This 177-nucleotide RNA was probed chemically with 2A3 and DMS. The RNA was probed in 150 mM KOAc, 10 mM MgCl2 and 150 mM bicine (pH 8.5) at 24 C. It was measured as part of the RMDB library M2PK50.
[RMDB]
RNA sequence: GGGAACGACUCGAGUAGAGUCGAAAACGCGAACUGUUCGCAGUUCGCGAAAUAACAAACAACUGCUAACCUACUGCGAUAAGCCCUAGCUAAGUAGGUAAAAAAGAGGAAAGUUCGCUUUCCUCAAGUUGGUGUAAAUGUUCGCAUUUACACCAACAAAAGAAACAACAACAACAAC
Reactivity to 2A3 in 0.01 (KOAc 150mM, MgCl2 10mM, bicine 150mM(pH8.5), 24C), signal-to-noise 2, nucleotides 027 to 126: c010g000c010g000a000a000c000u020g020u090u060c190g010c130a000g000u000u010c000g010c000g010a000a010a000u030a040a010c060a060a050a010c040a090a080c050u140g040c040u170a050a030c000c010u000a000c000u030g020c000g030a030u050a210a040g030c000c000c020u000a000g000c010u010a030a010g000u000a000g040g020u020a000a010a000a010a010a000g010a010g020g020a000a000a000g050u090u130c230g040c170u000u000u000c010c000u010c000a010a000
Reactivity to DMS in 0.01 (KOAc 150mM, MgCl2 10mM, bicine 150mM(pH8.5), 24C), signal-to-noise 2, nucleotides 027 to 126: c020g000c000g030a000a000c010u000g010u000u000c200g020c020a000g010u000u000c000g030c030g000a000a010a050u010a080a080c200a110a050a080c130a070a050c120u020g020c130u000a120a100c000c000u000a010c010u010g000c030g010a060u000a080a110g010c030c000c000u000a280g010c030u030a050a020g010u000a020g000g000u000a000a040a050a090a040a130g000a000g020g000a020a000a010g010u000u000c220g000c000u000u000u000c000c000u000c010a030a040